An RNA of 177 nucleotides, treated with 2A3 and DMS and read out base by base. Source: RMDB library VIROID, as collected in RNAgym. The reactions ran in a buffer of 150 mM KOAc, 10 mM MgCl2 and 150 mM bicine (pH 8.5), at 24 C.

RNA sequence: GGGAACGACUCGAGUAGAGUCGAAAACUAUCACACCAUACUUGCUUUAACUCUAUGCCCAUGACUUAAUUCGAUGAUACACAACUCCCUGGCCAUCGUCGCAAGUACCGCCAUGCGUCUAGUCUCCGGUAGUAGAAUACUUCGGUAUUCUACUACCAAAAGAAACAACAACAACAAC
Reactivity to 2A3 in 0.01 (KOAc 150mM, MgCl2 10mM, bicine 150mM(pH8.5), 24C), signal-to-noise 4, nucleotides 027 to 126: c010u040a050u170c030a030c010a010c070c030a030u090a140c030u050u070g030c010u070u090u120a080a040c030u000c020u060a040u130g010c010c000c030a070u110g030a090c050u070u180a080a060u190u020c040g040a040u080g030a030u090a120c070a020c020a110a140c040u010c010c000c000u000g050g000c000c020a050u040c030g050u000c010g000c030a040a030g030u020a060c010c000g030c000c010a030u050g010c010g050u010c030u030a030g030u010c030u010c080c060
Reactivity to DMS in 0.01 (KOAc 150mM, MgCl2 10mM, bicine 150mM(pH8.5), 24C), signal-to-noise 5, nucleotides 027 to 126: c050u000a080u010c060a080c070a080c050c030a070u000a050c050u000u000g010c070u000u010u000a050a080c060u000c040u000a070u010g010c010c020c030a070u000g010a060c080u000u000a080a100u010u000c050g010a050u010g000a090u010a060c080a060c100a060a090c060u010c020c010c010u010g010g020c040c020a040u000c050g010u010c060g010c070a030a070g010u000a070c050c030g010c040c030a060u000g010c050g010u000c050u000a090g010u000c030u000c050c270